[RMDB]
RNA sequence: GGGAACGACUCGAGUAGAGUCGAAAACAAAAUAUAAGGACGUACAUCAUCACAGUGCACCGUCAGUUCUGUGCGCUGGAUGGUCACAACUGACGGUGGCCAUCUGAUGGUGUACGUCCUUAUAUAGGCUUCUAGAGCAUUUCGAUGUUUUAGGAGCAAAAGAAACAACAACAACAAC
Reactivity to DMS in 0.01 (KOAc 150mM, MgCl2 10mM, bicine 150mM(pH8.5), 24C), signal-to-noise 7, nucleotides 027 to 126: c050a070a060a120a020u000a010u000a000a000g000g000a010c000g010u000a010c000a000u000c000a010u010c000a260c220a100g020u030g010c010a020c000c020g010u000c070a020g000u010u000c150u030g030u000g000c140g040c030u010g000g010a080u050g000g020u010c000a000c010a030a040c030u000g010a030c060g000g010u020g000g010c040c030a040u010c220u030g000a010u000g010g010u000g000u010a000c000g000u000c000c000u000u000a000u000a000u010a070g010
Reactivity to 2A3 in 0.01 (KOAc 150mM, MgCl2 10mM, bicine 150mM(pH8.5), 24C), signal-to-noise 2, nucleotides 027 to 126: c000a010a020a130a000u040a010u010a020a000g080g000a000c000g000u000a000c000a000u000c010a000u040c000a000c010a090g030u050g060c020a030c010c020g060u020c010a010g050u130u160c100u100g010u010g020c070g060c060u040g110g130a050u190g050g000u030c000a000c000a070a070c040u060g080a000c020g010g000u000g030g010c010c000a050u130c020u020g010a020u020g000g000u020g000u000a000c000g000u040c000c000u000u010a000u000a000u010a020g040